[RMDB]
RNA sequence: GGGAACGACUCGAGUAGAGUCGAAAAACAUAUAUAUGUACGUAUAUAUAUGUGCAUAUUUACCAAAAGGGCUUCUCUAUUUUUGAAAUGUAAGUAUGCAUUACCGCAGUUGAUAAGAAGCAACAAGUAAUCCAUGCACGUUCGCGUGCAUGGAUUAAAAAGAAACAACAACAACAAC
Reactivity to 2A3 in 0.01 (KOAc 150mM, MgCl2 10mM, bicine 150mM(pH8.5), 24C), signal-to-noise 1, nucleotides 027 to 126: a000c000a010u000a000u000a000u000a000u060g000u110a070c030g130u050a000u000a000u000a000u000a000u000g000u000g010c000a000u060a000u010u050u000a000c170c000a000a040a070a000g180g070g000c070u080u100c080u050c070u130a260u070u140u020u150u120g140a160a140a100u130g000u030a000a020g030u010a000u020g020c030a030u000u130a030c040c000g050c080a040g000u050u060g080a030u100a080a020g030a030a020g010c020a000a040c040a030a000g070
Reactivity to DMS in 0.01 (KOAc 150mM, MgCl2 10mM, bicine 150mM(pH8.5), 24C), signal-to-noise 1, nucleotides 027 to 126: a100c000a020u010a000u000a000u000a010u000g000u100a170c110g000u060a020u000a000u010a000u000a000u000g010u010g000c000a020u000a000u030u030u010a030c010c110a040a040a040a050g000g010g000c110u010u040c020u000c030u000a090u050u020u050u000u010g010a160a080a050u000g000u000a000a000g000u000a000u020g010c000a080u050u010a150c020c040g000c100a120g030u020u010g000a070u030a080a010g000a020a030g010c000a070a080c120a040a030g000